[RMDB]
RNA sequence: GGGAACGACUCGAGUAGAGUCGAAAAGAUAUGGAGAUGUCCCACGAGGUAAAUAUGGCGUUUGACGCAGGCUCGGAAACGAGCCUGCCGAGCCAUAUUUAAAUAUGUGGGAGCAUCUCCUAAGUCACUCAACAAACUAGUUCGCUAGUUUGUUGAGAAAAGAAACAACAACAACAAC
Reactivity to DMS in 0.01 (KOAc 150mM, MgCl2 10mM, bicine 150mM(pH8.5), 24C), signal-to-noise 3, nucleotides 027 to 126: g000a040u000a210u020g000g000a010g020a020u000g010u000c000c000c000a010c000g040a200g010g020u000a000a030a020u000a000u000g020g010c010g010u020u020u020g010a240c300g000c000a020g010g030c000u010c010g000g010a070a050a070c000g030a010g020c000c000u010g000c010c010g000a070g020c000c000a000u000a000u000u000u000a010a110a090u010a120u010g040u000g010g000g010a060g000c010a000u010c010u010c000c000u000a000a070g000u000c030a280
Reactivity to 2A3 in 0.01 (KOAc 150mM, MgCl2 10mM, bicine 150mM(pH8.5), 24C), signal-to-noise 2, nucleotides 027 to 126: g020a010u020a020u090g000g000a000g000a000u000g020u020c000c030c000a000c010g090a150g100g260u050a030a000a000u020a000u000g000g000c030g090u150u300u300g040a020c030g010c010a020g000g010c020u000c000g000g030a020a020a030c010g000a020g020c040c010u000g010c000c000g010a000g030c000c000a010u000a000u010u010u010a000a010a010u300a130u230g000u010g000g030g000a030g040c000a000u010c010u020c000c000u000a000a000g000u010c000a040